[RMDB]
This 207-nucleotide RNA was probed chemically with 2A3. The reactions ran in a buffer of 150 mM KOAc, 10 mM MgCl2 and 150 mM bicine (pH 8.5), at 24 C.

RNA sequence: GGGAACGACUCGAGUAGAGUCGAAAACAGACUGAUUACGCGCUCUCCCCUCUCACCGGGGGUCUGGAACCUACCACCACGGUGUCGGCCAGCUGCAGUCAGAGACUAGACCAUAUGAAGAGCUUGGACAGUCUGCCAACAUCUCAGUCCUACUGUAGAGCUAAUGCUAGUUCGCUAGCAUUAGCUCAAAAGAAACAACAACAACAAC
Reactivity to 2A3 in 0.01 (KOAc 150mM, MgCl2 10mM, bicine 150mM(pH8.5), 24C), signal-to-noise 1, nucleotides 027 to 156: c010a010g030a010c000u020g040a250u150u300a080c040g050c000g000c030u000c000u000c010c000c110c000u000c000u020c020a210c010c000g010g000g000g050g030u000c000u040g000g000a090a080c010c010u030a030c030c010a010c020c030a040c170g120g000u050g020u020c030g030g000c000c000a030g050c070u060g030c010a000g030u000c040a000g010a000g040a150c050u040a010g000a020c130c000a070u030a040u250g120a150a000g020a010g010c000u010u040g000g020a020c000a020g000u020c010u000g140c120c020a090a070c050a130u050c100u000c050a010g070u090c000c050u190a110c010u070g020u030a000